[RMDB]
RNA sequence: GGGAACGACUCGAGUAGAGUCGAAAAUUAGUAGAGAUGGGGUUUCACCAUAUUGGACCAGGCUGGUCUCAAACUCCUGACCUCAGGUGAUCCAAUUGCCUCGGCCCCCUAAUGUGCUGGGAUUACACUAAUCUAUGGUAUUCGUACCAUAGAUUAGAAAAGAAACAACAACAACAAC
Reactivity to DMS in 0.01 (KOAc 150mM, MgCl2 10mM, bicine 150mM(pH8.5), 24C), signal-to-noise 9, nucleotides 027 to 126: u010u000a070g010u000a060g010a070g010a090u000g010g010g010g010u000u000u000c060a090c060c050a080u010a110u010u000g010g010a080c030c020a050g010g020c110u000g010g000u000c030u000c120a030a050a090c060u000c030c020u000g000a160c070c040u000c070a050g010g010u000g000a050u000c030c030a060a110u000u000g010c040c020u000c080g010g000c010c010c010c030c040u000a040a070u010g010u000g010c020u000g000g000g000a070u000u000a050c120a190
Reactivity to 2A3 in 0.01 (KOAc 150mM, MgCl2 10mM, bicine 150mM(pH8.5), 24C), signal-to-noise 5, nucleotides 027 to 126: u050u030a010g060u050a030g020a020g030a130u090g000g030g020g030u030u100u090c070a060c040c010a020u050a120u180u140g040g020a050c010c010a020g090g070c110u060g020g030u030c030u020c100a080a100a040c030u010c010c010u040g080a110c000c020u050c040a010g000g070u020g030a050u010c030c000a020a080u060u080g020c010c010u030c030g080g000c010c000c010c000c010u060a140a050u120g030u040g060c020u030g010g030g020a030u060u080a020c070a010
Notes: This 177-nucleotide RNA was probed chemically with DMS and 2A3. It was measured as part of the RMDB library OK2TRN. The RNA was probed in 150 mM KOAc, 10 mM MgCl2 and 150 mM bicine (pH 8.5) at 24 C. The DMS profile rests on 25,346 reads.